[RMDB]
RNA sequence: GGGAACGACUCGAGUAGAGUCGAAAAAGACAGAGGAUGGGAAACAGCUUGUAUCACUUAUGGGUAAGUUUAAUAGCUUCUGCCAAAGCCAAAUUGCAAAAGCUCAAAAUAGUGGUAAUAACUCCUACCUAUCCAUUUUCUUCGGAAAAUGGAUAGGAAAAGAAACAACAACAACAAC
Reactivity to 2A3 in 0.01 (KOAc 150mM, MgCl2 10mM, bicine 150mM(pH8.5), 24C), signal-to-noise 1, nucleotides 027 to 126: a000g040a020c020a010g110a020g070g000a100u110g040g000g080a030a110a000c020a020g060c030u070u130g090u020a020u070c000a020c070u110u100a010u060g030g020g030u030a040a070g030u030u000u270a080a070u080a020g000c000u000u040c020u120g140c020c050a030a000a010g000c020c000a060a170a080u040u040g050c010a010a040a000a090g000c010u090c070a090a100a010a000u060a090g030u040g030g030u020a080a040u040a160a110c020u000c000c020u010a060
Reactivity to DMS in 0.01 (KOAc 150mM, MgCl2 10mM, bicine 150mM(pH8.5), 24C), signal-to-noise 1, nucleotides 027 to 126: a050g010a070c080a100g000a130g000g010a080u000g000g000g000a120a070a060c160a100g010c050u000u000g020u010a010u000c040a040c070u000u020a170u000g030g000g000u000a040a130g000u000u010u020a020a100u000a020g000c010u000u000c100u020g000c100c120a040a030a050g010c170c040a040a040a090u000u000g010c040a020a070a030a050g020c010u030c200a040a020a080a150u030a010g040u000g010g010u000a040a060u000a130a050c070u000c030c070u010a160
The data come from the RNA Mapping Database (RMDB), library OK2TRN. The record gives the reactivity of an RNA of 177 nucleotides to 2A3 and DMS. The RNA was probed in 150 mM KOAc, 10 mM MgCl2 and 150 mM bicine (pH 8.5) at 24 C. Values cover nucleotides 27 to 126. The 2A3 profile rests on 1,125 reads.